[RMDB]
RNA sequence: GGGAACGACUCGAGUAGAGUCGAAAAGAAAGAAAGUGGCAUUUAGGAAGUGCUUAGCUGUUUAAGCUCAGUUCAUCUGAAUUUAACUUAUUCGUCAUGAGAGUUUGCUAGUAGGGAUACAAGCAAACGAAGGAUGUUAAUUCGUUAACAUCCUUCGAAAAGAAACAACAACAACAAC
Reactivity to DMS in 0.01 (KOAc 150mM, MgCl2 10mM, bicine 150mM(pH8.5), 24C), signal-to-noise 9, nucleotides 027 to 126: g000a070a070a090g000a050a050a050g020u000g010g040c160a040u010u010u010a080g010g010a060a080g020u010g000c020u000u010a040g010c030u000g010u030u030u050a070a030g010c010u000c120a020g000u010u010c050a090u010c030u000g000a030a030u010u010u020a130a080c060u010u000a080u010u000c050g010u000c070a070u010g010a150g000a140g000u000u000u000g000c030u000a070g020u000a010g000g060g000a190u000a010c030a070a040g010c030a010a020a060
Reactivity to 2A3 in 0.01 (KOAc 150mM, MgCl2 10mM, bicine 150mM(pH8.5), 24C), signal-to-noise 9, nucleotides 027 to 126: g090a010a070a000g100a030a080a010g020u030g050g030c050a030u040u040u070a080g050g040a160a090g030u010g020c000u010u010a010g000c010u040g110u300u260u270a050a000g000c000u000c020a010g000u050u060c020a150u030c060u040g020a040a040u050u070u070a050a020c010u010u060a040u140u080c050g060u030c070a070u130g050a030g010a010g150u010u020u020g010c010u020a040g010u020a010g040g070g020a010u020a060c020a030a010g010c000a020a010a020